[RMDB]
Conditions: 150 mM KOAc, 10 mM MgCl2 and 150 mM bicine (pH 8.5), 24 C. This 177-nucleotide RNA was probed chemically with DMS and 2A3. Values cover nucleotides 27 to 126.

RNA sequence: GGGAACGACUCGAGUAGAGUCGAAAAUUAAAAGGGAACGACUCGAGUAGAGUCGAAAAGACGCUCAACUCAUGGAGCGCAAGACGAAUAGCUACAUAUUCGACAUGAGCGCGCCGUUCGCAAAAAACAAUCGUAAUUGGUUCGCCAAUUACGAUUGAAAAGAAACAACAACAACAAC
Reactivity to DMS in 0.01 (KOAc 150mM, MgCl2 10mM, bicine 150mM(pH8.5), 24C), signal-to-noise 1, nucleotides 027 to 126: u000u000a100a070a200a100g000g010g000a030a070c010g000a000c000u000c000g000a050g000u010a100g000a000g000u000c000g000a020a020a040a070g010a090c030g000c000u010c000a100a060c070u000c050a010u010g010g000a070g030c030g010c080a070a100g010a060c020g000a050a010u000a010g000c180u000a080c170a080u000a020u000u000c000g000a110c030a010u000g010a030g010c050g000c100g000c030c000g020u000u010c010g000c040a000a060a040a030a090a050
Reactivity to 2A3 in 0.01 (KOAc 150mM, MgCl2 10mM, bicine 150mM(pH8.5), 24C), signal-to-noise 2, nucleotides 027 to 126: u160u130a000a000a060a000g000g000g000a020a010c000g000a000c000u000c010g010a000g010u020a000g000a000g000u000c000g000a000a000a000a010g040a030c010g010c000u020c020a040a050c010u030c040a020u050g010g000a040g010c000g010c050a040a020g050a020c040g000a020a020u030a020g070c080u180a080c060a140u050a040u020u010c000g020a010c000a030u070g030a030g020c030g020c000g000c040c010g060u050u040c140g030c120a020a070a000a000a010a030

It was measured as part of the RMDB library M2PK90.